[RMDB]
The record gives the reactivity of an RNA of 177 nucleotides to DMS and 2A3. The reactions ran in a buffer of 150 mM KOAc, 10 mM MgCl2 and 150 mM bicine (pH 8.5), at 24 C. Source: RMDB library OK1LIB, as collected in RNAgym. Reactivities are given for positions 27 through 126. For DMS the reverse transcriptase was MarathonRT.
RNA sequence: GGGAACGACUCGAGUAGAGUCGAAAACAUAUUGGUGUCAUUAAUACAUUUAUACGAGAAUUAUUUGGAUUCGAUACUGAUGAAAAUCAUAUUAAUAAAGCAGAGGAGUAAUGACGUUGAGUGGAAACCUUUAUCAGCCUUUCGAGGCUGAUAAAGGAAAAGAAACAACAACAACAAC
Reactivity to DMS in 0.01 (KOAc 150mM, MgCl2 10mM, bicine 150mM(pH8.5), 24C), signal-to-noise 1, nucleotides 027 to 126: c120a110u060a000u010u080g000g000u000g040u000c030a010u010u030a010a090u010a040c010a040u000u050u000a030u000a080c190g010a140g000a010a000u000u000a040u000u000u040g000g000a070u000u000c050g000a060u000a050c230u010g010a000u000g000a060a070a110a040u040c000a000u010a000u000u000a070a100u020a020a010a050g010c130a160g000a130g080g040a030g000u020a030a030u050g000a000c070g000u000u000g050a040g000u000g000g000a070a170a070
Reactivity to 2A3 in 0.01 (KOAc 150mM, MgCl2 10mM, bicine 150mM(pH8.5), 24C), signal-to-noise 3, nucleotides 027 to 126: c050a030u190a130u140u220g120g000u060g000u000c000a010u000u070a100a100u070a050c040a050u000u240u150a180u000a070c100g100a060g090a200a060u100u130a130u130u240u110g150g010a030u060u000c000g000a030u050a220c070u060g050a050u020g010a030a130a010a000u020c050a000u010a060u210u030a070a140u160a240a040a000g050c060a020g010a030g160g000a040g030u070a050a070u070g000a040c050g030u010u010g020a050g040u080g000g040a100a000a000